Structure probing data (DMS and 2A3) for a 177-nucleotide construct. As a SHAPE reagent, 2A3 marks flexible, mostly unpaired nucleotides at the ribose 2'-OH. The DMS profile rests on 1,518 reads. For DMS the reverse transcriptase was MarathonRT.

RNA sequence: GGGAACGACUCGAGUAGAGUCGAAAAGAAGAGGCGUCUAAGCAGUCUUAUGCUAUUGCCACCAUCAAAGAAAUUGUUGGUGAGCGCCAACUAUUACUUGUGUGGGAGGCUGGCAAGUCCAAACCACCUAAACCUACCUGUUCGCAGGUAGGUUUAGAAAAGAAACAACAACAACAAC
Reactivity to DMS in 0.01 (KOAc 150mM, MgCl2 10mM, bicine 150mM(pH8.5), 24C), signal-to-noise 2, nucleotides 027 to 126: g010a130a070g000a110g010g010c060g010u000c130u020a120a140g000c040a080g000u010c050u010u000a070u000g000c050u000a070u000u000g000c000c020a120c020c000a010u000c050a040a030a110g000a060a080a060u000u000g000u000u000g000g010u010g000a150g030c250g000c020c010a050a020c060u000a010u000u010a070c020u000u000g000u000g010u000g000g000g010a100g020g000c040u010g000g000c050a010a130g000u020c030c030a050a100a160c070c060a060c130
Reactivity to 2A3 in 0.01 (KOAc 150mM, MgCl2 10mM, bicine 150mM(pH8.5), 24C), signal-to-noise 1, nucleotides 027 to 126: g050a000a030g110a030g000g030c030g010u000c080u160a090a000g020c020a070g010u010c030u160u180a130u070g030c010u000a030u150u190g010c000c000a010c020c000a010u080c010a050a020a050g100a070a120a070u070u040g010u010u000g020g020u070g050a080g070c120g010c010c000a010a000c000u000a010u120u000a040c020u100u070g070u000g000u020g170g050g010a100g050g000c020u000g000g050c020a060a000g050u000c000c000a050a050a070c040c030a050c000